[RMDB]
Annotation: The data come from the RNA Mapping Database (RMDB), library M2RFPK. An RNA of 207 nucleotides, treated with DMS and 2A3 and read out base by base. For DMS the reverse transcriptase was MarathonRT. The RNA was probed in 150 mM KOAc, 10 mM MgCl2 and 150 mM bicine (pH 8.5) at 24 C.
RNA sequence: GGGAACGACUCGAGUAGAGUCGAAAACCUGGUUUAGGGUUCCAGGCUAGCCCUAUCUAUCGGUCGAGAUGCGAGCGCUUAAGCUCAAAUUGAUUGGCUGAGUUAGUGGUGAACGUAUCCCUAUGUUAAAACGGUAGCUGCUUCGGCAGCUACCGAAGAGUAUAGUCAUCUUCGGAUGACUAUACUCAAAAGAAACAACAACAACAAC
Reactivity to DMS in 0.01 (KOAc 150mM, MgCl2 10mM, bicine 150mM(pH8.5), 24C), signal-to-noise 2, nucleotides 027 to 156: c020c020u010g010g040u000u000u000a010g040g000g020u000u000c030c000a070g050g040c010u010a290g010c000c010c000u000a020u000c030u030a070u010c030g070g040u010c020g020a180g010a080u000g010c300g030a060g000c020g020c280u010u020a110a230g000c000u040c000a040a190a070u000u000g020a160u000u010g000g030c040u000g010a070g000u000u000a020g020u000g010g020u030g020a090a100c090g030u010a080u000c000c010c010u000a200u020g010u010u000a080a130a110a200c030g000g000u000a000g000c000u000g030c000u000u010c290g070g000c040a040g000c010u000a000c000c010g000a000a050
Reactivity to 2A3 in 0.01 (KOAc 150mM, MgCl2 10mM, bicine 150mM(pH8.5), 24C), signal-to-noise 3, nucleotides 027 to 156: c000c000u000g000g020u030u070u040a010g010g000g010u090u060c010c000a020g030g030c050u010a030g010c000c000c000u010a010u010c020u050a190u040c010g010g030u020c000g010a010g000a050u030g050c000g010a000g000c040g040c250u300u300a130a100g010c000u020c000a020a080a030u020u020g080a060u000u100g000g000c010u000g020a010g020u010u010a080g000u120g100g000u040g030a070a000c060g040u070a110u070c000c000c000u030a050u120g090u030u090a080a080a050a030c030g000g000u000a000g000c000u000g030c000u050u060c150g090g000c000a000g000c000u000a000c000c000g000a000a000
The DMS profile rests on 2,262 reads.